[RMDB]
RNA sequence: GGGAACGACUCGAGUAGAGUCGAAAAUCGCGCCGACUCGUCGCGGGCGCGCGCCAGCGGCGGGACCGGACUGGGGUUGUCGAUCGUCGACUCUUUGGUGGCGGCCCAUGGCGGAGCGGUCACCGUGAAGGUGACCUCUCUUCGGAGAGGUCACCUUAAAAGAAACAACAACAACAAC
Reactivity to DMS in 0.01 (KOAc 150mM, MgCl2 10mM, bicine 150mM(pH8.5), 24C), signal-to-noise 2, nucleotides 027 to 126: u000c060g030c080g010c020c000g040a080c010u000c030g020u000c020g030c030g010g020g010c010g000c260g010c230g000c000c020a030g010c050g020g010c010g000g000g010a120c110c030g000g010a070c080u000g020g030g030g020u000u000g030u010c020g000a080u000c240g000u010c010g010a040c040u010c020u010u000u000g010g020u000g000g010c020g000g000c010c000c010a090u000g010g000c100g010g010a050g030c010g010g020u010c020a050c010c010g000u010g000
This 177-nucleotide RNA was probed chemically with DMS.
DMS adducts were read by reverse transcription with MarathonRT.
The RNA was probed in 150 mM KOAc, 10 mM MgCl2 and 150 mM bicine (pH 8.5) at 24 C.
Source: RMDB library OK2TST, as collected in RNAgym.